The record gives the reactivity of an RNA of 177 nucleotides to 2A3 and DMS. The 2A3 profile rests on 3,624 reads. For DMS the reverse transcriptase was MarathonRT. For 2A3 the reverse transcriptase was SuperScript II with manganese. The RNA was probed in 150 mM KOAc, 10 mM MgCl2 and 150 mM bicine (pH 8.5) at 24 C.

[RMDB]
RNA sequence: GGGAACGACUCGAGUAGAGUCGAAAAUAAAGUCGCCUAUAUCCGUUUUGCCUCUGUCUACCGCAGUUUCGAAGAUAUCAAAGAAUUUGGCGAAGAGAUCGCGCGCCUGGAGGACUAAGCCGUGCAGGCUUCGAUUAAGUUUCGACUUAAUCGAAGCAAAAGAAACAACAACAACAAC
Reactivity to 2A3 in 0.01 (KOAc 150mM, MgCl2 10mM, bicine 150mM(pH8.5), 24C), signal-to-noise 3, nucleotides 027 to 126: u130a010a070a020g060u030c010g060c030c020u090a080u010a030u170c030c020g030u000u000u110u140g020c000c000u050c020u050g030u020c020u060a070c020c040g000c030a030g010u030u050u080c070g030a080a020g020a090u090a060u140c070a110a100a040g080a070a140u140u070u150g030g010c010g000a020a020g020a010g000a100u030c030g010c000g000c000g020c050c000u030g020g020a020g000g000a000c020u050a080a000g000c020c020g030u040g010c050a060g080
Reactivity to DMS in 0.01 (KOAc 150mM, MgCl2 10mM, bicine 150mM(pH8.5), 24C), signal-to-noise 5, nucleotides 027 to 126: u010a080a100a140g010u010c050g010c010c010u000a130u010a120u000c040c020g020u000u010u010u010g010c040c010u000c040u000g010u000c070u000a100c100c040g010c070a070g020u000u000u000c040g010a120a100g010a130u020a100u000c090a060a080a140g010a050a100u010u000u000g010g000c030g010a070a100g000a120g000a060u000c060g010c040g020c060g020c060c040u000g000g000a080g000g000a070c050u000a060a130g010c040c020g020u000g020c130a130g020